[RMDB]
This 177-nucleotide RNA was probed chemically with 2A3 and DMS. The RNA was probed in 150 mM KOAc, 10 mM MgCl2 and 150 mM bicine (pH 8.5) at 24 C. For 2A3 the reverse transcriptase was SuperScript II with manganese.
RNA sequence: GGGAACGACUCGAGUAGAGUCGAAAACGGGGUAAGGGAUUGUAAAGGCUCACUGGGUCUACAGUCCCGUACCCACAAAGACUACAUUUGUACUAGACCCAGUGAGCCUUUAGUACGAUGUGGUCAAGGAAGACGGAGAUUUCGAUCUUUGUCUUCCAAAAGAAACAACAACAACAAC
Reactivity to 2A3 in 0.01 (KOAc 150mM, MgCl2 10mM, bicine 150mM(pH8.5), 24C), signal-to-noise 6, nucleotides 027 to 126: c080g010g000g000g010u020a050a050g010g010g000a000u000u000g010u000a000a000a010g000g000c000u020c070a090c030u020g000g000g000u010c000u000a000c000a000g000u000c000c010c000g000u000a000c000c010c010a020c010a000a050a010g000a000c000u000a000c000a020u040u070u300g010u000a000c000u000a000g000a000c000c000c000a040g040u080g080a000g000c000c000u000u000u010a000g000u010a000c000g000a000u010g000u000g000g000u010c010a010a000
Reactivity to DMS in 0.01 (KOAc 150mM, MgCl2 10mM, bicine 150mM(pH8.5), 24C), signal-to-noise 5, nucleotides 027 to 126: c090g000g000g000g010u000a020a040g010g000g000a020u000u000g000u000a010a010a010g010g000c000u000c000a050c020u000g000g000g000u000c010u000a000c020a010g010u000c000c000c010g000u000a010c010c000c010a040c120a070a090a090g000a020c000u000a010c010a020u010u010u040g030u000a010c010u000a000g000a010c000c000c000a000g010u020g010a010g000c010c000u000u000u000a010g000u010a010c020g010a010u010g010u000g000g000u000c010a140a140